[RMDB]
RNA sequence: GGGAACGACUCGAGUAGAGUCGAAAAACUUGGGAGGCUGAGGCAGGAGAAUUGCUUCAACCUGGGAGGCAGAGGUUGCAGUAAGCCGAGAUCGGGGCAUUGCACUCCAGCCUGAGUGACAAGAGCGGCCUCCGUUACAAUUCGUUGUAACGGAGGCAAAAGAAACAACAACAACAAC
Reactivity to DMS in 0.01 (KOAc 150mM, MgCl2 10mM, bicine 150mM(pH8.5), 24C), signal-to-noise 1, nucleotides 027 to 126: a040c050u000u010g000g000g000a050g000g010c020u000g010a010g000g030c030a060g000g000a090g010a070a100u010u000g020c010u010u000c060a030a060c080c000u070g020g020g010a070g020g000c000a020g010a110g010g030u000u000g000c070a070g020u020a020a300g030c000c030g010a110g000a120u000c050g000g020g000g000c120a100u000u000g010c100a070c040u000c010c020a120g010c030c020u030g010a080g010u020g030a070c090a030a110g000a090g010c130g010